RNA sequence: GGGAACGACUCGAGUAGAGUCGAAAAACGGCCGGGCAUAGCGGAAGAAGACGUGACACGCCAUAUUCAGAACGAGCUUGAGCAAUUGCACAGUGAAUGUGAAACCAAGCCCGCACCUUAGCCAAAAUCAUCGCUCGUUGUUCGCGACGAGUGAUGAAAAAGAAACAACAACAACAAC
Reactivity to 2A3 in 0.01 (KOAc 150mM, MgCl2 10mM, bicine 150mM(pH8.5), 24C), signal-to-noise 9, nucleotides 027 to 126: a000c030g040g000c020c010g010g010g000c030a060u070a050g020c020g050g030a040a040g080a050a010g040a050c030g030u040g020a010c020a010c070g020c020c000a060u080a090u140u110c050a030g070a120a040c030g010a020g030c000u040u040g040a040g070c040a070a160u120u160g050c020a020c010a030g050u070g190a230a110u040g030u010g030a050a020a030c020c000a020a000g010c000c000c000g000c010a050c000c010u030u070a020g030c020c000a040a050a000a110
Reactivity to DMS in 0.01 (KOAc 150mM, MgCl2 10mM, bicine 150mM(pH8.5), 24C), signal-to-noise 8, nucleotides 027 to 126: a070c060g000g010c130c130g000g010g010c050a060u010a170g010c010g000g000a110a090g010a160a050g000a040c040g000u000g010a040c020a100c110g010c020c030a080u030a090u020u000c060a080g010a090a110c070g000a090g000c020u000u010g000a110g010c080a100a080u010u020g000c010a020c030a050g020u030g020a080a110u010g010u010g010a060a060a120c070c030a020a060g010c010c020c010g010c090a060c030c020u010u030a070g000c040c040a050a080a080a100

Overview:
This 177-nucleotide RNA was probed chemically with 2A3 and DMS. The RNA was probed in 150 mM KOAc, 10 mM MgCl2 and 150 mM bicine (pH 8.5) at 24 C.